RNA sequence: GGGAACGACUCGAGUAGAGUCGAAAAGGUCUAACCUUCGGGUUAGACCAAAAUAAGAGCAAAGCGUAGCUCAGCUGCAAACGGAAAAAGCAGCAAAGCGAAAAACCCGCCAGUUCGCUGGCGGGAAUCUAUCUACACACUUCGGUGUGUAGAUAGAAAAAGAAACAACAACAACAAC
Reactivity to 2A3 in 0.01 (KOAc 150mM, MgCl2 10mM, bicine 150mM(pH8.5), 24C), signal-to-noise 1, nucleotides 027 to 126: g010g000u030c000u020a030a000c010c000u010u070c290g060g000g010u030u030a000g000a010c000c000a000a000a000a000u010a010a010g000a010g000c020a000a120a070g060c040g080u100a020g000c020u000c050a070g010c000u010g000c000a100a110a090c070g060g040a210a040a020a070a060g010c020a000g000c000a050a000a000g010c010g080a150a030a050a040a040c040c030c010g000c010c000a000g040u030u100c210g040c130u020g000g000c000g000g000g010a000a000
Reactivity to DMS in 0.01 (KOAc 150mM, MgCl2 10mM, bicine 150mM(pH8.5), 24C), signal-to-noise 1, nucleotides 027 to 126: g000g010u000c010u010a000a000c000c000u000u030c210g030g000g020u000u000a000g000a000c000c000a000a020a070a060u030a030a110g000a060g040c060a210a150a120g010c070g020u000a020g010c000u000c030a200g000c010u000g000c000a010a100a210c180g000g000a030a090a080a130a120g010c040a010g000c000a000a050a040g020c010g000a060a140a080a120a100c000c000c000g020c000c000a010g000u000u030c210g030c000u000g000g000c000g000g000g000a000a010
Chemical mapping of a 177-nucleotide RNA with 2A3 and DMS.
It was measured as part of the RMDB library M2PK50.
The RNA was probed in 150 mM KOAc, 10 mM MgCl2 and 150 mM bicine (pH 8.5) at 24 C.
For DMS the reverse transcriptase was MarathonRT.
For DMS, 798 sequencing reads were counted.